[RMDB]
RNA sequence: GGGAACGACUCGAGUAGAGUCGAAAAAUACACAUGCGGUCAUGAUAAUGCAGUUAAGGAUGCAGCAGACUGAUUAAUCCAGACAUCCCGCUACAAGCGUACGCUGGUCAGGCCUGGUCCGGUAAAGAAAAUACGGAACAUUCGUGUUCCGUAUUUUAAAAGAAACAACAACAACAAC
Reactivity to DMS in 0.01 (KOAc 150mM, MgCl2 10mM, bicine 150mM(pH8.5), 24C), signal-to-noise 9, nucleotides 027 to 126: a070u020a070c110a090c120a060u010g000c050g010g010u000c040a070u010g000a080u020a060a080u010g010c030a060g010u010u020a090a100g010g010a060u010g000c040a060g000c070a050g010a090c050u010g000a080u020u020a080a090u010c020c020a060g000a100c060a080u010c050c050c020g000c050u000a060c140a080a110g010c050g020u020a060c110g010c020u000g000g010u010c060a050g000g010c040c020u000g010g000u010c020c030g000g000u010a040a060a080g000
Reactivity to 2A3 in 0.01 (KOAc 150mM, MgCl2 10mM, bicine 150mM(pH8.5), 24C), signal-to-noise 8, nucleotides 027 to 126: a000u120a010c050a010c020a050u130g030c030g020g010u030c040a090u090g090a080u100a160a050u170g040c020a010g030u090u130a110a060g090g030a050u070g020c000a020g020c010a020g030a050c010u020g020a040u070u170a040a080u060c040c010a000g030a050c010a050u050c020c020c000g000c010u050a070c050a200a050g010c000g040u040a020c040g000c040u030g000g030u040c030a010g030g030c010c010u050g020g000u010c010c000g030g010u090a090a080a000g150

Source: RMDB libraries RFM100 and RFMREP, as collected in RNAgym.
Structure probing data (DMS and 2A3) for a 177-nucleotide construct.
The reactions ran in a buffer of 150 mM KOAc, 10 mM MgCl2 and 150 mM bicine (pH 8.5), at 24 C.
Reactivities are given for positions 27 through 126.
For 2A3 the reverse transcriptase was SuperScript II with manganese.